An RNA of 207 nucleotides, treated with DMS and 2A3 and read out base by base. Conditions: 150 mM KOAc, 10 mM MgCl2 and 150 mM bicine (pH 8.5), 24 C. It was measured as part of the RMDB library RNAMAK. DMS adducts were read by reverse transcription with MarathonRT. The 2A3 profile rests on 5,081 reads.
RNA sequence: GGGAACGACUCGAGUAGAGUCGAAAAGGGGUCGUCAAUGGAGAGCCUAAAGGACUGUUGACGGACUGAAGCCUCCACGGUCCGAAGGGUCCGAUUGGGCUCGAUGAAAUUGACGACGGAGGCACCCAAAACGGAGGACACUUCGGUGUCCUCCGAAGAAAUUGAUAUACUUCGGUAUAUCAAUUUCAAAAGAAACAACAACAACAAC
Reactivity to DMS in 0.01 (KOAc 150mM, MgCl2 10mM, bicine 150mM(pH8.5), 24C), signal-to-noise 1, nucleotides 027 to 156: g000g020g030g020u000c020g010u000c030a020a030u000g020g000a060g000a060g020c020c000u000a040a110a140g040g000a060c000u000g000u000u010g010a300c040g010g000a030c020u000g000a020a140g020c000c000u000c010c040a300c020g020g000u000c020c000g000a080a180g020g020g010u010c010c000g000a210u010u000g040g000g000c000u000c000g000a090u040g010a070a160a020u000u000g000a020c010g010a000c020g000g030a020g120g070c030a060c000c000c020a090a070a120a250c000g000g060a040g020g010a060c010a020c010u000u020c240g060g030u010g000u000c010c000u000c010c000g000a000a060
Reactivity to 2A3 in 0.01 (KOAc 150mM, MgCl2 10mM, bicine 150mM(pH8.5), 24C), signal-to-noise 3, nucleotides 027 to 156: g020g010g030g010u010c000g000u000c010a000a000u000g000g000a000g020a000g010c000c000u030a040a020a020g010g000a010c050u140g280u300u170g170a030c030g000g000a000c000u000g040a090a010g000c000c000u000c000c000a010c010g000g000u000c010c010g020a070a060g300g030g000u000c010c000g040a070u100u140g000g000g000c010u000c000g000a010u010g000a000a000a000u000u000g000a000c000g000a000c000g000g010a000g000g000c010a030c000c010c010a020a060a000a020c020g000g010a000g000g010a000c010a000c000u130u150c280g090g010u010g000u000c000c000u010c000c000g000a000a000